Chemical mapping of a 207-nucleotide RNA with 2A3 and DMS.
For 2A3 the reverse transcriptase was SuperScript II with manganese.
Reactivities are given for positions 27 through 156.
Source: RMDB library OK3TST, as collected in RNAgym.
Reactivities are rounded to 0.1 and cut off at 0 and 3.
[RMDB]
RNA sequence: GGGAACGACUCGAGUAGAGUCGAAAAGUUCGGUAGUUAGAGAAAUUCUACAUAAUAUGUGUCAAAUUGGAGUAUGUAAGGAUAAUUUUAGAUCUGGAAUGCAGUUUUAUGCCGAUCAGCCUGGAACCUCACAAAGUAUAUACUUUUCUAGUUUGAGAUUAGAGGUACAGUUCGCUGUACCUCUAAUAAAAGAAACAACAACAACAAC
Reactivity to 2A3 in 0.01 (KOAc 150mM, MgCl2 10mM, bicine 150mM(pH8.5), 24C), signal-to-noise 1, nucleotides 027 to 156: g030u120u030c030g070g050u060a000g020u000u100a040g020a000g030a030a230a130u110u070c010u060a030c000a000u230a130a010u120a080u130g100u050g050u040c100a060a130a080u140u110g060g000a060g000u060a010u000g000u060a030a040g040g030a070u050a080a090u070u040u080u130a090g000a080u060c000u080g040g070a040a020u070g060c000a010g000u020u020u040u210a060u120g080c000c000g010a040u020c000a000g000c000c000u010g020g030a030a000c030c000u030c010a020c020a070a080a000g080u000a070u020a010u040a130c000u040u170u080u120c050u010a060g040u080u170u140g010a040g000
Reactivity to DMS in 0.01 (KOAc 150mM, MgCl2 10mM, bicine 150mM(pH8.5), 24C), signal-to-noise 2, nucleotides 027 to 156: g030u000u000c040g040g020u000a060g030u000u000a110g010a190g010a110a080a070u000u000c000u010a070c030a100u000a080a140u000a150u000g000u000g000u000c030a020a060a110u000u000g010g000a070g050u000a030u000g010u010a080a120g020g010a090u020a040a120u000u000u000u000a080g010a060u010c000u010g050g000a080a070u000g000c000a070g000u000u010u000u010a060u020g030c000c030g000a110u000c030a110g010c020c030u000g000g000a020a030c010c020u000c070a030c070a060a040a120g010u000a110u000a080u000a060c030u000u000u000u010c000u000a080g020u000u000u000g000a170g010
For 2A3, 560 sequencing reads were counted.